[RMDB]
Chemical mapping of a 177-nucleotide RNA with DMS.
RNA sequence: GGGAACGACUCGAGUAGAGUCGAAAAACGGAACCCAAUCGGUAACUCCUCAAUCAUUCGUCCCAAGAAAAAGUCCACCGAUGAGGAAAAAGCCAUAAAAAGUUCGUCUGAGCCGGCACUUUCAGAAUGAGGAUUUUAAUUUCGAUUAAAAUCCUCAAAAAGAAACAACAACAACAAC
Reactivity to DMS in 0.01 (KOAc 150mM, MgCl2 10mM, bicine 150mM(pH8.5), 24C), signal-to-noise 2, nucleotides 027 to 126: a110c090g030g020a080a100c040c000c070a110a120u040c130g030g030u000a080a130c150u000c000c000u000c050a110a080u000c090a060u000u000c070g010u000c000c010c020a080a090g020a020a040a140a070a050g000u000c020c060a040c040c040g000a070u000g010a060g010g010a050a070a050a140a130g010c020c010a080u020a010a090a070a100a120g000u000u000c070g000u000c060u000g000a110g020c030c030g000g000c050a050c130u000u000u000c030a030g000a100a130
DMS adducts were read by reverse transcription with MarathonRT. The reactions ran in a buffer of 150 mM KOAc, 10 mM MgCl2 and 150 mM bicine (pH 8.5), at 24 C. The DMS profile rests on 1,220 reads.